[RMDB]
RNA sequence: GGGAACGACUCGAGUAGAGUCGAAAAGAGGUUGAGGCGUACUCCCGAGGCAUGGUCGAGGAGGGCCGCUGGAGCGACGCUCAGGCCAUCUCGUUCAUGACCAAGGCCAUGACCGGCCUGGGCAACGAUAUUCGUAUCUCUUCGGAGAUACGAAUAUAAAAGAAACAACAACAACAAC
Reactivity to DMS in 0.01 (KOAc 150mM, MgCl2 10mM, bicine 150mM(pH8.5), 24C), signal-to-noise 8, nucleotides 027 to 126: g010a080g010g010u000u000g000a120g010g010c040g010u000a130c090u000c030c010c030g010a130g010g010c060a040u000g010g010u000c020g010a090g010g010a130g010g010g020c050c010g010c100u010g000g000a070g010c030g010a110c200g010c000u010c010a270g010g020c010c010a080u010c050u000c060g000u000u000c030a040u000g000a080c010c020a090a120g030g010c030c010a040u010g010a070c160c100g010g000c010c000u000g000g000g000c040a070a070c150g010
Reactivity to 2A3 in 0.01 (KOAc 150mM, MgCl2 10mM, bicine 150mM(pH8.5), 24C), signal-to-noise 3, nucleotides 027 to 126: g050a030g050g030u070u090g030a020g020g030c020g020u040a060c030u020c020c040c020g030a050g010g030c050a050u100g080g000u060c030g020a050g040g040a080g010g070g010c040c030g050c060u100g080g020a050g020c090g120a080c130g000c020u010c020a000g010g000c000c000a050u050c080u010c060g060u100u040c010a010u020g040a080c020c030a040a080g060g000c000c000a020u050g030a010c040c100g000g000c000c000u010g000g000g000c030a040a030c040g020
Source: RMDB library OK2TST, as collected in RNAgym. Chemical mapping of a 177-nucleotide RNA with DMS and 2A3. For 2A3 the reverse transcriptase was SuperScript II with manganese. 2A3 is a SHAPE reagent: it acylates the 2'-hydroxyl of flexible nucleotides of all four kinds. The RNA was probed in 150 mM KOAc, 10 mM MgCl2 and 150 mM bicine (pH 8.5) at 24 C. In probing experiments dimethyl sulfate is read out at A N1 and C N3, which are open when not base-paired. DMS adducts were read by reverse transcription with MarathonRT.